[RMDB]
RNA sequence: GGGAACGACUCGAGUAGAGUCGAAAAGACCGUCAGUUAGACGGAAGAAGUGCAUAAAUCCACAGCGGAAGACGAGAUAAUGCACAAAUGUGGAUAAGCGUACGGAUCUACGUGCGCUAAACGUGAGCCUCACUCCGUAUUUCGAUACGGAGUGAGGAAAAGAAACAACAACAACAAC
Reactivity to DMS in 0.01 (KOAc 150mM, MgCl2 10mM, bicine 150mM(pH8.5), 24C), signal-to-noise 3, nucleotides 027 to 126: g000a170c000c000g000u030c010a150g010u050u060a030g070a040c010g000g010a050a030g000a120a140g020u000g000c020a010u000a060a090a020u000c000c030a070c070a180g100c070g100g000a130a100g000a080c110g000a110g020a110u000a140a020u000g000c060a100c010a040a050a080u050g000u000g010g030a090u000a090a070g000c000g010u000a040c000g000g000a160u210c160u090a140c000g040u000g000c020g030c000u010a000a010a060c160g000u020g000a230g010
Reactivity to 2A3 in 0.01 (KOAc 150mM, MgCl2 10mM, bicine 150mM(pH8.5), 24C), signal-to-noise 3, nucleotides 027 to 126: g070a020c000c000g010u000c000a050g070u090u250a110g000a010c040g040g020a000a030g070a060a000g000u040g010c000a030u030a070a250a000u000c040c020a010c020a040g050c030g070g090a090a020g020a050c090g020a040g010a100u140a110a010u170g010c030a000c000a010a040a070u110g000u010g010g070a060u040a140a010g000c000g000u010a000c000g000g050a050u050c050u140a070c070g000u000g000c010g000c000u020a000a030a000c010g050u070g110a020g030
Source: RMDB library OK1LIB, as collected in RNAgym.
Structure probing data (DMS and 2A3) for a 177-nucleotide construct.
The 2A3 profile rests on 2,981 reads.
For DMS the reverse transcriptase was MarathonRT.
For DMS, 3,237 sequencing reads were counted.